This 177-nucleotide RNA was probed chemically with DMS and 2A3. The reactions ran in a buffer of 150 mM KOAc, 10 mM MgCl2 and 150 mM bicine (pH 8.5), at 24 C. Reactivities are rounded to 0.1 and cut off at 0 and 3. The DMS profile rests on 1,105 reads. For 2A3, 323 sequencing reads were counted. DMS adducts were read by reverse transcription with MarathonRT.
RNA sequence: GGGAACGACUCGAGUAGAGUCGAAAAUACAGGGGUCUCUGGAUUGAUCCGAGCUUUCCAAAUGGGGAAUGCAACUCAAUUGUAUGUGAAACAAUCCACAAUUCUACGAAGUGGGUGUCAAAGGGGGUAGGACAGUUCCUUUCGAGGAACUGUCCUAAAAAGAAACAACAACAACAAC
Reactivity to DMS in 0.01 (KOAc 150mM, MgCl2 10mM, bicine 150mM(pH8.5), 24C), signal-to-noise 1, nucleotides 027 to 126: u000a060c080a110g000g000g000g020u000c080u000c100u030g090g000a050u000u000g030a040u000c040c030g000a090g080c030u040u040u030c000c000a050a170a110u000g040g010g000g000a060a000u010g000c120a130a080c070u080c090a100a050u000u000g070u000a040u000g000u020g000a210a090a060c090a030a070u020c070c000a020c030a090a100u160u000c100u020a130c020g030a160a110g020u000g000g000g020u020g020u000c020a000a010a030g000g000g010g000g030
Reactivity to 2A3 in 0.01 (KOAc 150mM, MgCl2 10mM, bicine 150mM(pH8.5), 24C), signal-to-noise 1, nucleotides 027 to 126: u300a010c100a060g190g000g000g100u040c060u050c050u080g170g040a060u080u000g050a070u040c040c050g000a100g040c040u010u080u150c000c000a000a000a300u120g010g000g010g000a070a020u110g000c100a070a000c000u000c050a070a200u050u000g080u140a160u060g170u100g040a190a000a000c190a120a010u000c000c000a000c040a000a110u270u230c060u010a130c050g000a210a160g000u000g060g000g000u000g000u000c010a000a070a070g010g000g000g000g060
It was measured as part of the RMDB library OK1LIB.